[RMDB]
RNA sequence: GGGAACGACUCGAGUAGAGUCGAAAACAUGUAGGCGGAGUGACUUGGUAAAUCCGGUUGCUUAUCAACGCUGAGGUGUGAUGACGAGCCACUACGGUGGUGAAGUAGUUGAUGCCAAGCUUCCAGGGACAUGCCGAAAAUUCGUUUUCGGCAUGUCAAAAGAAACAACAACAACAAC
Reactivity to DMS in 0.01 (KOAc 150mM, MgCl2 10mM, bicine 150mM(pH8.5), 24C), signal-to-noise 3, nucleotides 027 to 126: c040a030u000g000u010a230g000g000c070g000g000a030g000u020g000a070c000u010u020g040g020u010a070a100a160u020c020c050g010g000u000u000g020c010u000u000a130u000c110a060a130c080g010c010u000g010a100g000g010u000g000u000g010a080u000g000a040c010g000a300g010c010c000a030c020u010a080c140g030g010u000g000g010u000g010a050a140g010u010a110g000u000u000g010a070u010g010c040c020a100a110g010c040u000u010c020c030a060g000g020
Reactivity to 2A3 in 0.01 (KOAc 150mM, MgCl2 10mM, bicine 150mM(pH8.5), 24C), signal-to-noise 1, nucleotides 027 to 126: c000a030u110g000u190a040g070g000c010g000g020a000g030u030g020a050c020u120u300g010g080u120a160a090a060u110c010c020g030g010u010u020g000c000u040u030a080u230c090a010a070c000g000c000u030g030a050g000g090u050g050u010g000a100u100g050a010c020g000a010g020c010c030a020c000u060a020c200g060g000u000g010g000u000g010a100a020g000u070a010g010u000u100g100a080u040g030c010c020a010a030g010c020u050u000c000c000a020g090g000
Structure probing data (DMS and 2A3) for a 177-nucleotide construct. For DMS the reverse transcriptase was MarathonRT. It was measured as part of the RMDB library OK2TRN.